[RMDB]
Source: RMDB library OK2TST, as collected in RNAgym. An RNA of 177 nucleotides, treated with 2A3 and DMS and read out base by base. The reactions ran in a buffer of 150 mM KOAc, 10 mM MgCl2 and 150 mM bicine (pH 8.5), at 24 C. For 2A3 the reverse transcriptase was SuperScript II with manganese. High DMS reactivity at an A or C suggests that its Watson-Crick edge is free.
RNA sequence: GGGAACGACUCGAGUAGAGUCGAAAAUGUCGGCGACCCAGCUCAGUUGGCGAAAGAUCUCGAUGCCGACGAUGCCGUCGAUCUGCGUGCCCAGCACCUGCGACAGCAACGAUAGAUCGAGACCGAACUAGUGGACUAAUUUCGAUUAGUCCACUAGAAAAGAAACAACAACAACAAC
Reactivity to 2A3 in 0.01 (KOAc 150mM, MgCl2 10mM, bicine 150mM(pH8.5), 24C), signal-to-noise 3, nucleotides 027 to 126: u070g010u020c000g000g020c020g020a080c000c030c000a030g000c010u070c060a140g060u130u150g070g020c090g170a180a080a030g080a130u020c000u020c040g010a030u070g040c020c000g000a000c010g000a020u050g020c020c020g020u020c010g000a060u030c080u070g030c070g040u030g010c020c130c050a020g070c000a010c020c030u070g020c010g000a010c000a020g000c000a050a060c070g090a090u140a210g070a010u000c010g000a010g020a010c020c000g040a060a070
Reactivity to DMS in 0.01 (KOAc 150mM, MgCl2 10mM, bicine 150mM(pH8.5), 24C), signal-to-noise 8, nucleotides 027 to 126: u000g010u000c020g000g000c010g010a300c060c010c020a150g010c050u000c100a170g010u010u010g010g010c080g000a080a090a160g010a050u000c010u000c020g000a030u000g000c020c010g010a030c010g010a110u000g010c000c020g020u000c010g020a040u000c050u000g000c140g010u000g010c020c100c120a200g010c000a010c030c020u000g000c000g000a030c050a030g000c010a030a060c100g010a120u000a080g000a050u000c000g000a020g000a040c020c020g020a120a200